[RMDB]
RNA sequence: GGGAACGACUCGAGUAGAGUCGAAAAGUAUGAGACAAGUAAGUGUUGGUUUUUUUGAUGAGGCGUUUGAGGGUAGAUAAACUGACAAACAGCUCUUCAGCUAACUCUUCUAAGGAACUAAAGUCUCGGUACUAUAGCACUUCGGUGCUAUAGUACCAAAAGAAACAACAACAACAAC
Reactivity to DMS in 0.01 (KOAc 150mM, MgCl2 10mM, bicine 150mM(pH8.5), 24C), signal-to-noise 2, nucleotides 027 to 126: g000u060a090u010g000a000g000a000c010a100a070g010u010a060a090g000u000g000u000u000g000g030u000u000u010u060u020u120u000g010a020u030g000a090g000g010c160g000u000u000u000g050a300g010g000g010u000a070g010a120u030a060a120a070c030u000g010a300c110a040a040a020c050a120g070c030u040c050u020u000c060a020g000c000u010a030a040c010u000c020u000u030c080u080a090a050g000g060a070a050c020u010a060a100a090g000u020c000u000c010
Reactivity to 2A3 in 0.01 (KOAc 150mM, MgCl2 10mM, bicine 150mM(pH8.5), 24C), signal-to-noise 4, nucleotides 027 to 126: g050u070a060u220g020a040g020a000c100a160a040g110u140a090a060g020u050g030u080u010g030g050u010u020u010u030u070u140u030g040a050u030g000a020g070g040c050g040u020u060u060g030a060g020g030g050u030a020g090a120u190a110a190a020c030u060g120a070c040a030a080a010c030a050g000c010u010c010u110u040c010a000g000c000u040a050a040c000u000c020u080u000c010u060a030a040g110g000a060a000c020u060a190a000a080g010u010c000u000c000
Chemical mapping of a 177-nucleotide RNA with DMS and 2A3.